Notes:
This 177-nucleotide RNA was probed chemically with 2A3 and DMS. The reactions ran in a buffer of 150 mM KOAc, 10 mM MgCl2 and 150 mM bicine (pH 8.5), at 24 C. 2A3 adducts were read by reverse transcription with SuperScript II with manganese.

RNA sequence: GGGAACGACUCGAGUAGAGUCGAAAAUGGGGCGCCACGCCUCUAAGAAGAAAACAGAGGUCUCCAAUGGUUAGCUCAGAAGGGUCAGAAAUCCUUCAAAGAGUAUAAGGGUAAAAGCUAGCUUGACAUCCUCUUUAAGUUUCGACUUAAAGAGGAUAAAAGAAACAACAACAACAAC
Reactivity to 2A3 in 0.01 (KOAc 150mM, MgCl2 10mM, bicine 150mM(pH8.5), 24C), signal-to-noise 6, nucleotides 027 to 126: u130g010g000g000g010c030g010c030c030a080c060g000c010c000u000c010u020a040a030g060a080a010g060a020a090a020a000c070a020g030a010g040g030u050c050u040c070c040a040a030u030g000g020u060u050a020g000c010u010c020a000g020a010a000g010g000g020u050c050a000g130a090a210a040u030c000c000u020u020c030a070a060a000g070a020g040u140a050u060a230a050g050g010g030u050a060a080a010a000g030c020u020a010g010c000u020u010g010a030c020
Reactivity to DMS in 0.01 (KOAc 150mM, MgCl2 10mM, bicine 150mM(pH8.5), 24C), signal-to-noise 8, nucleotides 027 to 126: u020g020g000g010g020c070g010c080c090a080c180g010c000c000u000c010u000a050a070g010a120a110g010a100a070a100a090c130a040g000a070g010g010u000c050u010c040c070a090a110u030g000g000u000u000a070g000c010u000c060a160g000a020a020g000g000g000u010c100a160g010a090a130a060u010c000c000u000u010c010a090a040a080g000a060g000u020a090u030a070a090g010g000g000u000a040a050a080a100g010c030u000a050g010c020u010u020g010a100c240